[RMDB]
RNA sequence: GGGAACGACUCGAGUAGAGUCGAAAAGAUAUGGAUCUGUGGGACUUUUGACGGAGUAUCGGAAACGAUACCCGAUAAGUCCUGCAGAUCCUAAGUCAAAACACGCAGAUCUUCGGAUCUGCGUGAAGUAGGUUAGUCUGUUCGCAGACUAACCUACAAAAGAAACAACAACAACAAC
Reactivity to DMS in 0.01 (KOAc 150mM, MgCl2 10mM, bicine 150mM(pH8.5), 24C), signal-to-noise 2, nucleotides 027 to 126: g000a020u000a300u000g000g040a020u000c000u000g020u000g000g000g010a000c010u000u010u020u010g000a160c130g020g000a100g010u000a000u000c000g000g000a060a040a190c010g020a020u000a020c000c000c000g000a060u000a020a000g010u000c000c000u000g000c000a000g010a000u000c000c000u000a000a080g000u000c020a120a090a120a240c000a020c000g000c020a010g000a000u000c000u000u030c270g020g000a000u000c000u000g000c000g010u000g010a010a070
Reactivity to 2A3 in 0.01 (KOAc 150mM, MgCl2 10mM, bicine 150mM(pH8.5), 24C), signal-to-noise 1, nucleotides 027 to 126: g000a030u060a040u080g010g020a000u000c000u000g000u030g020g040g050a030c040u120u200u220u300g150a070c080g060g000a280g060u010a000u010c010g020g000a070a020a000c010g010a000u000a000c040c010c020g000a020u020a080a030g010u010c020c000u000g010c010a000g000a000u000c000c000u000a000a000g000u000c020a070a070a020a020c000a000c000g000c000a000g000a010u000c000u010u230c280g190g020a000u000c000u000g000c000g000u000g010a000a000
Conditions: 150 mM KOAc, 10 mM MgCl2 and 150 mM bicine (pH 8.5), 24 C. Structure probing data (DMS and 2A3) for a 177-nucleotide construct. The data come from the RNA Mapping Database (RMDB), library TTRDEL. Values cover nucleotides 27 to 126. The DMS profile rests on 1,403 reads.